[RMDB]
RNA sequence: GGGAACGACUCGAGUAGAGUCGAAAAGCUCGUCCACUCCGAUCGAGCCACUAGGAGCUAUCGGAACUCUUAGCGGAGUGACCAAAUCUCUCGACUUCAGUUGGACAUCGUGAGAUCGAGGUCCAAAGACGAUGGAUGCCUUCGGGUAUCUAUCGUCAAAAGAAACAACAACAACAAC
Reactivity to DMS in 0.01 (KOAc 150mM, MgCl2 10mM, bicine 150mM(pH8.5), 24C), signal-to-noise 9, nucleotides 027 to 126: g000c050u000c020g000u010c040c030a060c040u000c030c020g000a110u020c070g010a050g010c030c050a300c030u010a030g000g010a010g020c060u030a110u020c180g010g030a180a130c000u000c010u000u000a040g010c040g000g000a060g000u010g000a060c030c040a110a110a050u010c020u000c020u010c010g000a080c200u000u010c050a140g020u020u030g000g000a060c230a100u000c000g000u000g000a070g000a040u000c050g010a090g000g000u000c010c070a040a060a100
Reactivity to 2A3 in 0.01 (KOAc 150mM, MgCl2 10mM, bicine 150mM(pH8.5), 24C), signal-to-noise 9, nucleotides 027 to 126: g010c000u010c030g040u030c040c010a030c020u000c010c010g030a070u100c050g040a020g010c000c010a020c010u040a020g020g010a030g010c020u070a080u220c080g050g060a060a040c000u000c000u020u030a010g030c020g030g010a020g010u050g020a020c010c010a010a060a070u020c020u000c000u020c020g050a050c030u090u050c090a130g040u090u090g050g000a010c010a040u010c010g010u020g050a060g000a030u090c020g030a040g010g020u000c000c000a020a050a020
Structure probing data (DMS and 2A3) for a 177-nucleotide construct.
Reactivities are given for positions 27 through 126.
The reactions ran in a buffer of 150 mM KOAc, 10 mM MgCl2 and 150 mM bicine (pH 8.5), at 24 C.
The DMS profile rests on 27,447 reads.
It was measured as part of the RMDB library OK1LIB.